This 177-nucleotide RNA was probed chemically with 2A3 and DMS. Values cover nucleotides 27 to 126. For 2A3 the reverse transcriptase was SuperScript II with manganese.
RNA sequence: GGGAACGACUCGAGUAGAGUCGAAAAGAUAUGGAAUAUGGACAUGAUCUAGUACACUCGGAAACGAGUGGACCGAUCAACAGCCCGCUAUUCCUAAGUCAAAGUCCCGCACUUCGGUGCGGGACAACGUUAUGUGUAGGUUCGCCUACACAUAACGAAAAGAAACAACAACAACAAC
Reactivity to 2A3 in 0.01 (KOAc 150mM, MgCl2 10mM, bicine 150mM(pH8.5), 24C), signal-to-noise 3, nucleotides 027 to 126: g020a010u090a050u150g010g020a010a000u020a050u170g010g020a020c060a120u100g000a000u010c020u050a020g010u000a010c010a000c020u010c000g010g040a090a100a050c010g010a000g000u010g000g000a000c010c010g000a000u000c010a020a060c030a020g040c000c000c000g030c030u000a010u000u000c000c000u010a210a030g080u050c060a200a020a030g010u010c000c000c000g000c000a020c000u080u130c300g110g000u000g000c000g000g080g000a000c000a000a000
Reactivity to DMS in 0.01 (KOAc 150mM, MgCl2 10mM, bicine 150mM(pH8.5), 24C), signal-to-noise 5, nucleotides 027 to 126: g020a040u010a300u000g000g000a000a000u000a010u010g010g010a020c040a240u000g000a000u010c000u000a070g010u000a110c000a010c000u000c010g000g000a090a110a210c000g010a010g000u000g000g010a050c290c180g010a000u000c000a040a080c250a120g010c000c000c000g030c190u000a010u000u000c000c010u000a040a070g000u000c020a080a100a180g010u000c000c000c000g000c010a000c000u000u010c180g040g000u000g000c000g000g000g010a000c000a000a010